[RMDB]
RNA sequence: GGGAACGACUCGAGUAGAGUCGAAAAGGCUGAAGUAGGCAGCUAUUGCAGUCAUCCAGGAGAGAGACAACAGGUGCUCAGGUCAGAGUGAGCCAUAGGUGAGGAAUGGGCAAGGGUUGUAGUUCACUGAGGUGUGGCAGUGAGGGUAGUACCUGUAACCACCUAGUAAUUUCGAUUACUAGGUGGUAAAAGAAACAACAACAACAAC
Reactivity to DMS in 0.01 (KOAc 150mM, MgCl2 10mM, bicine 150mM(pH8.5), 24C), signal-to-noise 3, nucleotides 027 to 156: g030g030c020u000g020a050a060g030u000a050g010g030c220a100g030c050u000a050u000u010g000c020a060g020u000c020a100u000c030c030a130g030g020a120g010a130g000a100g000a140c060a090a120c070a050g000g010u000g030c030u010c050a080g020g010u000c070a090g000a140g040u000g010a110g000c030c060a090u010a080g000g030u010g020a090g010g010a090a080u010g010g020g030c050a070a100g000g020g020u000u010g010u000a060g000u010u010c020a070c040u000g000a100g020g040u000g030u010g000g000c040a040g030u000g000a050g020g010g020u000a040g000u000a100c030c020u010g010u010a120
Reactivity to 2A3 in 0.01 (KOAc 150mM, MgCl2 10mM, bicine 150mM(pH8.5), 24C), signal-to-noise 4, nucleotides 027 to 156: g020g020c030u020g040a040a000g030u090a040g060g020c020a040g020c030u060a080u040u150g070c030a020g010u030c020a050u030c030c030a030g060g010a030g010a010g000a000g020a040c040a080a010c020a090g000g040u050g030c010u020c030a010g000g050u060c040a010g020a020g110u050g020a010g020c000c030a070u100a050g040g010u040g040a030g020g040a100a050u100g000g030g010c050a060a060g050g010g000u020u080g020u040a040g020u030u070c040a030c060u050g010a040g030g040u070g010u050g040g000c010a010g040u040g050a050g010g000g000u020a020g020u030a040c020c010u030g010u040a020

Source information:
Chemical mapping of a 207-nucleotide RNA with DMS and 2A3. For DMS, 7,318 sequencing reads were counted. Conditions: 150 mM KOAc, 10 mM MgCl2 and 150 mM bicine (pH 8.5), 24 C. The data come from the RNA Mapping Database (RMDB), library OK3TST. Reactivities are given for positions 27 through 156.